Background:
Structure probing data (2A3 and DMS) for a 177-nucleotide construct.

RNA sequence: GGGAACGACUCGAGUAGAGUCGAAAACGCUCAGGGAGAGUACAUCGCUCCUGAGAAGAUCGAGAACGUGUACAUCCAGGCACCCUCCGCGGCACAGGCAUUCGUGCACGGAACCUCCACGGAGAGAACUAUCCCUCGUGUUCGCACGAGGGAUAGUAAAAGAAACAACAACAACAAC
Reactivity to 2A3 in 0.01 (KOAc 150mM, MgCl2 10mM, bicine 150mM(pH8.5), 24C), signal-to-noise 1, nucleotides 027 to 126: c070g040c010u030c060a080g080g060g060a080g010a070g060u030a060c060a070u150c080g020c010u000c000c000u020g030a010g000a030a080g110a060u060c060g020a030g020a140a030c030g000u000g010u010a020c000a060u030c020c040a010g030g000c000a040c000c000c000u070c000c030g090c170g000g000c010a020c040a080g080g070c060a000u170u150c090g030u040g000c030a000c000g050g000a000a020c000c010u100c000c010a070c120g080g000a110g010a000g020a010
Reactivity to DMS in 0.01 (KOAc 150mM, MgCl2 10mM, bicine 150mM(pH8.5), 24C), signal-to-noise 1, nucleotides 027 to 126: c190g000c030u000c090a110g010g040g010a060g000a060g010u000a040c020a030u000c080g010c060u000c000c040u030g000a030g000a200a070g000a100u000c020g000a020g000a000a050c030g000u000g000u000a010c010a170u000c000c030a130g010g000c080a180c030c030c030u000c030c030g040c080g000g000c300a060c100a100g030g020c080a050u000u000c010g010u010g020c080a150c070g000g010a020a120c080c010u000c020c050a040c120g000g020a070g000a120g010a120
2A3 adducts were read by reverse transcription with SuperScript II with manganese. The reactions ran in a buffer of 150 mM KOAc, 10 mM MgCl2 and 150 mM bicine (pH 8.5), at 24 C.